[RMDB]
RNA sequence: GGGAACGACUCGAGUAGAGUCGAAAAGAUAUGGAAUACUCCGAUAAGCUCUGUAUCGGAAACGAUAUUGAGCUUUUGACGGAGUUCCUAAGUCAAAGAGACUUCGGUCUUCGGACCGAAGUCUCAACAUUACGUGGUAGUUCGCUACCACGUAAUGAAAAGAAACAACAACAACAAC
Reactivity to 2A3 in 0.01 (KOAc 150mM, MgCl2 10mM, bicine 150mM(pH8.5), 24C), signal-to-noise 2, nucleotides 027 to 126: g030a030u130a040u180g000g010a070a030u100a220c000u000c010c010g060a100u020a070a010g010c000u000c010u030g020u020a000u000c020g020g030a070a060a020c010g000a000u010a010u020u030g000a000g000c000u000u000u010u010g030a040c000g010g000a000g000u000u010c000c000u020a140a010g030u010c060a130a040a100g010a000g010a010c010u000u010c020g090g000u000c020u090u160c300g090g000a040c000c020g000a000a000g000u000c000u000c000a000a010
Reactivity to DMS in 0.01 (KOAc 150mM, MgCl2 10mM, bicine 150mM(pH8.5), 24C), signal-to-noise 4, nucleotides 027 to 126: g010a050u010a300u010g000g000a030a080u020a080c010u000c010c000g020a140u000a040a010g010c000u000c010u000g010u000a000u000c000g000g000a090a080a160c010g000a020u000a010u000u000g000a030g000c000u000u000u000u000g010a190c120g020g000a020g000u000u010c000c000u000a060a180g010u010c040a060a100a140g010a020g000a020c000u000u000c000g020g010u000c000u000u020c180g020g000a020c000c000g000a010a000g000u000c000u000c000a040a100